[RMDB]
Structure probing data (DMS and 2A3) for a 207-nucleotide construct. For 2A3, 3,905 sequencing reads were counted. DMS adducts were read by reverse transcription with MarathonRT. The DMS profile rests on 2,919 reads. The data come from the RNA Mapping Database (RMDB), library M2RFPK. Values cover nucleotides 27 to 156. The reactions ran in a buffer of 150 mM KOAc, 10 mM MgCl2 and 150 mM bicine (pH 8.5), at 24 C.
RNA sequence: GGGAACGACUCGAGUAGAGUCGAAAACUCCCAUCCAACUCCUAUUCCAACACGUCCUCGUCGUACAGAGUGGUAACAUGUGUCACCACAUAUCCAAGCUUGGGUACACGGGCCUGACCCAACCCCUAAAACAGAGACGAGUUCGCUCGUCUCUGAAGUAAACUAAACUCUUCGGAGUUUAGUUUACAAAAGAAACAACAACAACAAC
Reactivity to DMS in 0.01 (KOAc 150mM, MgCl2 10mM, bicine 150mM(pH8.5), 24C), signal-to-noise 2, nucleotides 027 to 156: c050u000c010c000c020a160u000c070c020a100a100c040u000c060c020u030a070u000u000c030c030a030a050c060a080c130g010u000c010c010u010c070g030u000c060g020u000a130c080a140g010a160g040u030g020g010u020a030a030c030a120u000g030u000g020u000c060a070c010c010a020c030a140u000a010u000c050c030a090a180g030c080u000u010g000g020g020u000a070c070a060c060g000g030g000c000c040u010g000a300c020c010c000a070a070c020c010c020c010u010a050a080a100a230c000a000g010a020g030a000c020g000a040g010u000u000c300g050c030u010c010g020u000c000u010c000u000g020a010a070
Reactivity to 2A3 in 0.01 (KOAc 150mM, MgCl2 10mM, bicine 150mM(pH8.5), 24C), signal-to-noise 4, nucleotides 027 to 156: c030u020c000c010c010a020u080c020c020a050a040c020u020c010c000u030a050u040u020c010c010a030a010c040a020c110g060u060c020c040u060c020g080u020c050g030u060a050c050a070g100a020g070u020g020g020u090a100a040c040a110u180g100u090g070u150c020a040c060c020a020c020a040u070a040u060c030c010a020a040g030c060u060u070g060g020g020u030a030c020a020c050g020g010g000c010c040u100g050a110c000c000c000a020a050c020c000c000c000u020a060a020a020a050c000a000g000a000g010a000c000g000a000g000u010u030c130g040c040u000c000g000u000c000u000c000u000g000a000a000